[RMDB]
RNA sequence: GGGAACGACUCGAGUAGAGUCGAAAAUCCUUUUCGAAGGAGCGGAUGGGGUCGAGCGAUAAGGACGCUUGAUGACCCACACUGAAGCCUCCACGGUGUGGCAAGGUCGUCCUUUUGACGCUCGACGGAGGCACCCUGCCAACUGGUUCGCCAGUAAAGUGUAAGAUACAUUCGUGUAUCUUACACUAAAAGAAACAACAACAACAAC
Reactivity to 2A3 in 0.01 (KOAc 150mM, MgCl2 10mM, bicine 150mM(pH8.5), 24C), signal-to-noise 8, nucleotides 027 to 156: u030c010c020u050u030u040u100c110g070a080a040g030g030a050g050c090g040g030a110u100g030g000g050g010u020c010g010a000g000c030g080a100u020a110a010g010g000a000c010g030c080u090u090g050a130u110g110a230c010c020c000a000c000a000c000u030g030a080a030g030c000c010u020c020c010a030c000g000g000u000g000u000g010g020c060a080a060g060g110u210c020g000u020c030c000u000u040u040u110g230a150c030g000c000u000c000g010a010c010g000g010a000g000g000c010a020c000c010c010u040g060c000c010a050a020c010u010g000g020u070u060c150g070c080c000a030g020u120a040a240
Reactivity to DMS in 0.01 (KOAc 150mM, MgCl2 10mM, bicine 150mM(pH8.5), 24C), signal-to-noise 3, nucleotides 027 to 156: u010c000c010u010u000u000u010c130g010a090a070g010g020a070g020c080g000g010a100u000g020g020g020g020u000c030g010a020g030c010g030a130u010a090a070g010g010a060c010g000c040u000u000g010a140u010g000a150c300c000c010a020c010a020c020u000g010a030a110g000c020c010u010c010c020a300c030g000g030u000g020u050g000g020c020a070a070g020g010u010c030g010u000c010c010u000u000u000u000g020a210c070g020c020u000c010g000a030c040g000g010a030g060g030c020a160c020c010c020u000g000c010c020a100a080c030u000g010g010u000u010c210g030c010c010a090g010u000a070a120
The record gives the reactivity of an RNA of 207 nucleotides to 2A3 and DMS. DMS adducts were read by reverse transcription with MarathonRT.